[RMDB]
RNA sequence: GGGAACGACUCGAGUAGAGUCGAAAAGGAAUUCCAGCAUAACCACUCAAGAAGCAGCUAAUAUAGUGGUAGGUUAUGGAGUGUGGCCAAGGGGUAUAACUCCAGUUGAGGCAACUGCAGUAGAUCGCCCUACUGAACCAGGAACCUCUUGUGAGAGUACUGUUCCCUUUUUCGAAAGGGAACAGUAAAAAGAAACAACAACAACAAC
Reactivity to 2A3 in 0.01 (KOAc 150mM, MgCl2 10mM, bicine 150mM(pH8.5), 24C), signal-to-noise 2, nucleotides 027 to 156: g040g040a050a040u130u000c030c000a040g020c010a050u070a060a080c000c000a050c040u070c080a140a020g080a080a000g040c030a000g090c050u130a180a050u140a210u120a260g020u020g020g020u030a100g050g010u050u030a010u060g000g000a030g000u080g010u100g060g000c040c030a050a040g050g000g000g000u050a100u060a260a010c020u000c010c010a040g000u050u070g030a060g000g020c010a020a000c020u020g000c010a030g010u020a000g010a040u090c030g070c030c020c000u010a000c030u010g080a080a100c070c020a000g080g020a050a100c000c000u000c000u000u060g050u050g030a100g000a010g110
Reactivity to DMS in 0.01 (KOAc 150mM, MgCl2 10mM, bicine 150mM(pH8.5), 24C), signal-to-noise 1, nucleotides 027 to 156: g010g010a060a070u000u010c030c010a060g000c020a150u010a190a110c010c000a090c040u000c010a090a110g030a140a090g040c010a080g030c030u000a090a110u000a130u000a100g010u020g020g010u000a050g040g010u000u000a070u010g020g020a060g040u000g000u010g010g000c040c020a080a060g030g010g010g030u010a010u010a100a120c010u010c010c030a120g010u000u010g000a070g000g010c010a020a300c030u000g050c040a060g030u010a080g000a060u040c040g010c070c040c000u010a080c000u000g000a070a200c150c020a170g010g010a300a030c010c040u000c000u030u010g020u000g000a120g000a120g010